RNA sequence: GGGAACGACUCGAGUAGAGUCGAAAAUUCGAGUAAUUCAUGCAAACGGAGCUUCACUUUUCUUUAUCUGCCUUUAUCUUCACGUAGGACGAGGUAUUUAUUAUGGCUCUUACAUAAAUCACAUAACCAGUUCCCGAGAGUUCGCUCUCGGGAACUGAAAAGAAACAACAACAACAAC
Reactivity to 2A3 in 0.01 (KOAc 150mM, MgCl2 10mM, bicine 150mM(pH8.5), 24C), signal-to-noise 1, nucleotides 027 to 126: u090u100c010g060a000g040u090a100a000u300u000c090a000u100g120c020a050a050a000c040g040g000a000g000c070u150u250c000a010c120u060u020u010u040c000u020u290u170a130u020c000u020g000c000c000u040u160u290a180u090c000u000u000c000a060c290g090u110a090g020g000a000c000g000a000g000g010u000a010u000u150u000a050u150u000a060u060g010g000c100u000c000u100u000a000c000a080u190a090a060a010u090c010a000c060a170u030a000a010c020

The data come from the RNA Mapping Database (RMDB), library OK1LIB. Chemical mapping of a 177-nucleotide RNA with 2A3. For 2A3 the reverse transcriptase was SuperScript II with manganese. Conditions: 150 mM KOAc, 10 mM MgCl2 and 150 mM bicine (pH 8.5), 24 C.